RNA sequence: GGGAACGACUCGAGUAGAGUCGAAAAGAUAUGGACAUCGAGGAUCUCUGCACCUAUGAAGUCGGAAACGAUGGAGGUGUAGAGGGAGAUGUCCUAAGUCAAAGAUGUGUCGUUCGCGACACAUCAACUUAGAAUCGUUGUUCGCAACGAUUCUAAGAAAAGAAACAACAACAACAAC
Reactivity to 2A3 in 0.01 (KOAc 150mM, MgCl2 10mM, bicine 150mM(pH8.5), 24C), signal-to-noise 5, nucleotides 027 to 126: g020a010u090a080u200g000g010a000c010a010u010c010g080a300g070g000a020u000c010u010c000u010g000c010a000c000c000u260a300u300g040a020a000g030u020c000g010g030a070a030a050c010g010a020u030g010g060a020g010g000u000g000u000a010g000a000g000g000g000a010g000a000u010g010u000c000c000u010a040a010g020u000c060a100a030a120g010a010u020g000u000g000u010c010g010u020u110c300g000c010g130a000c010a000c000a000u000c000a000a010
Reactivity to DMS in 0.01 (KOAc 150mM, MgCl2 10mM, bicine 150mM(pH8.5), 24C), signal-to-noise 4, nucleotides 027 to 126: g020a080u000a300u000g000g000a030c000a010u000c010g000a090g030g000a030u010c010u000c000u000g010c010a000c000c000u010a190u010g010a110a190g010u000c010g020g000a130a070a150c000g000a020u000g010g010a000g010g030u000g020u000a000g000a020g000g000g000a030g010a020u000g010u000c000c000u000a010a060g010u000c040a080a110a130g000a010u000g020u000g000u000c000g030u010u010c250g000c000g000a020c000a000c000a000u000c000a050a120